RNA sequence: GGGAACGACUCGAGUAGAGUCGAAAAAAGUUGAAGUUCAAAGAGGUCUGUAAAACUACUACUGGUAUACCUGAAUACAACUUUAUCAUCUACGACUCAUCAGAUCGUGGCCAGGAAAGUUUAGCUAGCAGAGGUCACUUCGGUGACCUCAAAAGAAACAACAACAACAAC
Reactivity to 2A3 in 0.01 (KOAc 150mM, MgCl2 10mM, bicine 150mM(pH8.5), 24C), signal-to-noise 2, nucleotides 027 to 129: a010a000g050u010u020g040a130a030g040u060u040c050a060a080a070g130a010g100g010u000c020u080g070u240a000a040a040a080c030u100a000c000u030a000c000u020g040g060u090a040u060a050c000c000u000g020a040a000u040a010c000a000a000c000u080u000u030a140u160c100a020u070c100u080a040c000g020a000c020u000c000a000u040c000a040g000a090u050c000g020u030g000g110c000c000a030g010g040a100a000a000g000u070u060u000a030g000c060u040a000g050c020a000
Reactivity to DMS in 0.01 (KOAc 150mM, MgCl2 10mM, bicine 150mM(pH8.5), 24C), signal-to-noise 2, nucleotides 027 to 129: a030a050g080u070u060g000a070a200g060u090u000c050a050a190a040g010a040g020g000u040c150u030g000u030a090a030a010a100c070u040a070c070u020a170c180u080g000g030u130a030u030a030c060c020u000g000a010a190u070a080c300a050a010c020u000u050u070a100u050c050a070u030c050u020a070c060g060a040c090u000c080a100u150c120a040g010a090u040c050g050u000g000g000c000c090a080g010g000a040a080a000g000u020u000u000a000g050c120u050a130g050c120a060